[RMDB]
RNA sequence: GGGAACGACUCGAGUAGAGUCGAAAACAGGUUCAAGUGAUUCUCCUGCCUCAGCCUCCUGAGUAGCUGGGAUUACAGGCACCUGCCAACCGCGCCUGGCUAAUUUUUUUAUUUUUAGUAGAGAAAGACUUAAAUUAAGAUUCGUCUUAAUUUAAGUAAAAGAAACAACAACAACAAC
Reactivity to DMS in 0.01 (KOAc 150mM, MgCl2 10mM, bicine 150mM(pH8.5), 24C), signal-to-noise 1, nucleotides 027 to 126: c040a060g020g010u000u000c060a060a090g040u010g000a070u010u000c020u020c040c060u000g020c020c000u000c030a040g000c080c030u000c110c020u000g000a010g010u000a040g010c010u000g000g000g000a030u000u000a050c040a050g040g010c060a020c050c060u000g000c030c020a120a120c080c050g040c150g010c040c010u010g000g010c020u000a010a010u000u000u000u000u000u000u000a050u030u010u000u020u010a120g000u000a090g010a150g010a060a080a130g000
Structure probing data (DMS) for a 177-nucleotide construct. The DMS profile rests on 1,190 reads. Values cover nucleotides 27 to 126. The RNA was probed in 150 mM KOAc, 10 mM MgCl2 and 150 mM bicine (pH 8.5) at 24 C.